[RMDB]
Chemical mapping of a 177-nucleotide RNA with DMS and 2A3.
For DMS the reverse transcriptase was MarathonRT.
For 2A3 the reverse transcriptase was SuperScript II with manganese.
The DMS profile rests on 1,585 reads.
RNA sequence: GGGAACGACUCGAGUAGAGUCGAAAAGAUAUGGAUGCUCUAGCCGCAAGCGAAGAACGUAGCUCGGAAACGAGCUACGGGAGCUUGCCUAGAGGCAUCCUAAGUCAAACAGAGGUUCGCCUCUGAACCAGUACAGUUUGUUCGCAAACUGUACUGGAAAAGAAACAACAACAACAAC
Reactivity to DMS in 0.01 (KOAc 150mM, MgCl2 10mM, bicine 150mM(pH8.5), 24C), signal-to-noise 2, nucleotides 027 to 126: g000a050u000a300u000g000g000a000u000g000c010u000c020u000a040g000c300c300g020c000a010a000g020c000g030a140a180g010a150a180c010g000u000a000g010c000u000c000g010g020a070a100a210c010g020a020g000c010u000a000c000g000g000g000a070g000c000u000u000g000c010c020u000a010g010a060g030g000c010a010u000c000c000u000a010a090g020u010c030a180a110a240c000a000g000a030g020g010u000u000c250g020c010c000u000c010u000g000a090a230
Reactivity to 2A3 in 0.01 (KOAc 150mM, MgCl2 10mM, bicine 150mM(pH8.5), 24C), signal-to-noise 2, nucleotides 027 to 126: g020a000u050a050u250g000g000a010u010g010c000u000c030u040a070g180c280c090g000c050a010a000g010c030g300a300a030g000a050a010c000g000u010a010g000c010u020c000g010g000a050a080a070c000g010a000g020c000u010a000c000g000g010g030a000g040c000u010u010g000c000c010u050a050g040a090g010g040c000a000u000c000c000u010a080a010g050u000c020a130a090a110c000a020g010a000g040g070u080u170c290g140c110c000u000c010u030g000a010a060